[RMDB]
RNA sequence: GGGAACGACUCGAGUAGAGUCGAAAAUCGCCAUUAAAUUCUGGCUGCGGACCCGAAGUGUGUGCGGGCCCAGGACUUACUCGAAGGGCGCACUUCUUGGGAAUGCGCAUCCCGUAGGCGCAGGAGAUUACUUAAGCUCUUUCGAGAGCUUAAGUAAAAAAGAAACAACAACAACAAC
Reactivity to 2A3 in 0.01 (KOAc 150mM, MgCl2 10mM, bicine 150mM(pH8.5), 24C), signal-to-noise 8, nucleotides 027 to 126: u070c020g030c030c010a070u130u190a070a080a100u180u050c030u030g040g000c040u040g010c030g000g050a090c000c000c030g030a060a050g030u090g000u060g020u060g110c060g020g080g050c000c020c010a020g020g050a060c100u120u140a070c030u100c050g070a110a090g030g010g000c010g000c000a010c020u020u020c020u070u120g040g020g020a070a050u100g060c020g000c020a030u050c000c000c000g000u040a040g070g000c020g000c030a020g030g070a070g010a050
Reactivity to DMS in 0.01 (KOAc 150mM, MgCl2 10mM, bicine 150mM(pH8.5), 24C), signal-to-noise 7, nucleotides 027 to 126: u030c070g020c000c010a110u030u020a060a100a130u030u010c110u010g010g020c040u050g020c040g000g010a300c020c010c020g010a040a050g010u010g010u010g010u000g010c030g010g000g000c010c010c010a110g000g000a110c120u010u010a070c100u000c040g000a130a110g010g000g020c030g010c030a020c030u010u000c020u020u040g000g020g010a070a150u040g000c020g010c040a090u000c020c000c010g000u010a070g000g010c010g010c050a050g010g000a090g000a180